This 177-nucleotide RNA was probed chemically with DMS and 2A3. Reactivities are given for positions 27 through 126. DMS adducts were read by reverse transcription with MarathonRT. The data come from the RNA Mapping Database (RMDB), library TTRDEL. The reactions ran in a buffer of 150 mM KOAc, 10 mM MgCl2 and 150 mM bicine (pH 8.5), at 24 C. The 2A3 profile rests on 4,786 reads.
RNA sequence: GGGAACGACUCGAGUAGAGUCGAAAAGAUAUGGAUUAACGCAAGGAACUACAACAGCAGUCGGAAACGACUGCGUUGCUGAUGACCGUUAAUCCUAAGUCAAAAGGUGGCCGUUCGCGGCCACCAACCAGACAAUUAUCUUCGGAUAAUUGUCUGGAAAAGAAACAACAACAACAAC
Reactivity to DMS in 0.01 (KOAc 150mM, MgCl2 10mM, bicine 150mM(pH8.5), 24C), signal-to-noise 2, nucleotides 027 to 126: g010a000u000a240u030g000g000a010u000u000a000a000c000g010c160a100a160g020g000a130a090c120u010a060c000a000a020c000a130g030c000a010g020u010c000g000g010a050a040a090c000g010a010c000u010g000c000g020u000u000g020c070u000g010a040u000g000a260c300c000g000u010u000a000a000u000c000c010u010a000a090g010u000c030a070a060a120a110g010g030u000g010g000c010c000g040u000u010c160g020c000g010g000c000c010a000c010c000a030a070
Reactivity to 2A3 in 0.01 (KOAc 150mM, MgCl2 10mM, bicine 150mM(pH8.5), 24C), signal-to-noise 3, nucleotides 027 to 126: g010a000u040a000u070g000g000a010u010u030a000a000c050g020c200a200a190g140g060a230a290c180u190a050c240a030a010c040a100g000c000a000g000u010c000g000g010a010a030a030c000g000a000c010u010g010c000g010u000u000g000c120u260g090a300u150g020a030c030c020g000u000u000a000a000u020c010c010u000a010a010g010u010c020a040a020a090a120g010g000u000g000g000c050c040g040u040u050c300g020c020g130g000c020c010a000c000c000a000a030